[RMDB]
RNA sequence: GGGAACGACUCGAGUAGAGUCGAAAAGUCUUGCUUCGGCAAGACAAACUGGGGUCGAGUGGUAGGAACUACGACCUAUAAUCCACUGAAGCCUCCACGGUGGGUAGGUCGCCAAACACUCGACGGAGGCACCCGCCUUGCUUCUUUCGAGAAGCAAUGUUGUAUGAAGUUUCGACUUCAUACAACAAAAAGAAACAACAACAACAAC
Reactivity to DMS in 0.01 (KOAc 150mM, MgCl2 10mM, bicine 150mM(pH8.5), 24C), signal-to-noise 1, nucleotides 027 to 156: g020u000c000u000u000g010c000u000u010c300g040g000c000a020a000g030a020c000a000a000a040c160u000g010g000g020g020u010c000g000a040g060u000g000g020u020a210g060g010a170a120c010u000a100c000g000a010c010c000u000a060u000a120a140u000c050c010a060c030u020g010a040a210g070c070c000u000c030c020a300c070g040g020u010g010g000g020u030a010g020g010u000c010g030c010c070a060a100a100c020a030c050u020c030g030a000c070g000g030a090g090g080c010a160c000c030c050g000c070c050u000u000g020c010u000u000c000u000u000u010c140g000a090g000a110a080g000c060a070a030
Reactivity to 2A3 in 0.01 (KOAc 150mM, MgCl2 10mM, bicine 150mM(pH8.5), 24C), signal-to-noise 4, nucleotides 027 to 156: g000u010c000u020u010g000c020u050u120c300g150g000c000a000a000g050a000c000a000a020a000c040u120g050g000g070g010u000c000g000a010g000u020g010g050u170a080g040g030a180a100c180u190a090c290g000a010c000c010u010a010u010a020a040u080c010c000a000c000u000g010a070a010g020c020c050u000c020c020a080c030g000g000u010g000g020g020u010a010g000g000u010c060g030c160c000a070a280a010c000a000c000u000c000g000a000c000g000g000a000g000g020c010a020c010c010c020g070c020c030u010u030g000c000u000u000c010u020u090u130c220g090a040g000a020a000g000c000a000a020
Structure probing data (DMS and 2A3) for a 207-nucleotide construct.
Conditions: 150 mM KOAc, 10 mM MgCl2 and 150 mM bicine (pH 8.5), 24 C.
The 2A3 profile rests on 3,973 reads.
For DMS the reverse transcriptase was MarathonRT.
Values cover nucleotides 27 to 156.
2A3 adducts were read by reverse transcription with SuperScript II with manganese.